[RMDB]
RNA sequence: GGGAACGACUCGAGUAGAGUCGAAAAUAAUGGUGGCCAUUGAUGGCUUCAAUGCCUUCUUCCAUCCGGUUACUCGCAUUUUCUCCGACAACAAGCAGCUCGUGACUCCGGAUCGGGUCACGCUCAAUAAAUCCCUCCUCUUCGGAGGAGGGAUUUAAAAAGAAACAACAACAACAAC
Reactivity to DMS in 0.01 (KOAc 150mM, MgCl2 10mM, bicine 150mM(pH8.5), 24C), signal-to-noise 1, nucleotides 027 to 126: u000a080a090u010g010g020u000g010g010c190c010a090u050u010g000a080u000g000g000c040u000u030c220a050a120u020g000c040c000u000u010c000u000u000c070c070a060u000c150c220g010g000u010u010a080c070u000c090g040c200a080u000u000u000u010c010u000c040c030g010a060c040a010a030c040a070a090g020c090a060g020c060u000c070g040u000g000a010c010u000c010c120g000g000a190u000c130g010g000g000u000c020a040c000g010c050u000c040a050a110